[RMDB]
RNA sequence: GGGAACGACUCGAGUAGAGUCGAAAAAUGUCUCCCAAGAAGAAAAAGAGAGGAUUCAAGAAGUGGGAGACUUCCCCAUAACGCUGGAGACAUCCUGGAAGGGGAAAGAGGAUGGGUGGAAAGAAAACUACUUUAAUAGCUUCGGCUAUUAAAGUAGAAAAGAAACAACAACAACAAC
Reactivity to 2A3 in 0.01 (KOAc 150mM, MgCl2 10mM, bicine 150mM(pH8.5), 24C), signal-to-noise 2, nucleotides 027 to 126: a010u060g000u000c010u020c010c010c000a010a010g050a070a000g010a020a110a020a060a020g130a010g030a030g120g080a060u060u100c050a070a060g070a150a020g190u030g010g000g000a000g000a040c010u020u030c000c000c000c000a050u170a080a040c060g020c090u030g020g010a020g000a040c030a030u070c010c030u030g030g040a110a040g070g000g000g060a070a080a020g050a010g000g000a070u050g030g000g060u070g040g050a040a090a010g040a010a080a020a040
Reactivity to DMS in 0.01 (KOAc 150mM, MgCl2 10mM, bicine 150mM(pH8.5), 24C), signal-to-noise 2, nucleotides 027 to 126: a050u000g010u000c000u000c020c000c010a060a080g000a170a160g000a060a060a110a110a060g010a150g030a090g000g010a100u000u000c050a060a100g010a160a180g020u010g010g000g020a040g010a010c000u000u010c020c000c000c250a090u000a080a060c080g010c060u000g020g010a100g010a080c120a090u000c010c040u000g020g000a100a070g000g000g010g010a030a030a060g000a090g010g010a070u010g000g010g020u000g000g000a090a050a090g000a040a110a120a130